[RMDB]
RNA sequence: GGGAACGACUCGAGUAGAGUCGAAAAGUAGUGUUUGUGCCUACGCAGGGAGAGCCUGUGUUCGAAACUAGCACCUACACGGUCGCUUUUAUCGAGAAAGAUGCUGGUAUGGAAGAGCGGGCCACGCACCCUUACGUUCAUUCGUGAACGUAAGGGUAAAAGAAACAACAACAACAAC
Reactivity to DMS in 0.01 (KOAc 150mM, MgCl2 10mM, bicine 150mM(pH8.5), 24C), signal-to-noise 3, nucleotides 027 to 126: g010u010a050g020u000g020u000u000u000g010u020g000c030c000u000a060c050g030c050a040g010g000g000a200g000a150g010c010c010u000g020u000g010u000u000c050g000a080a040a050c060u010a020g020c010a010c020c030u000a110c200a100c130g010g000u000c230g020c090u010u000u010u000a060u000c020g010a080g000a090a090a080g010a050u000g010c030u000g020g010u010a050u000g020g010a060a060g000a080g020c070g000g010g020c010c050a060c170g010c120
Reactivity to 2A3 in 0.01 (KOAc 150mM, MgCl2 10mM, bicine 150mM(pH8.5), 24C), signal-to-noise 3, nucleotides 027 to 126: g030u080a000g040u010g030u060u050u100g050u090g020c020c010u020a030c030g010c030a010g020g030g010a210g010a070g300c000c030u030g000u010g010u030u040c020g080a090a000a040c030u020a030g000c010a010c000c010u070a070c060a030c110g000g110u080c070g060c070u000u100u040u080a090u090c040g000a030g100a060a140a040g040a030u060g030c030u050g000g020u090a100u120g040g040a050a030g010a030g070c010g010g030g030c000c010a050c050g050c000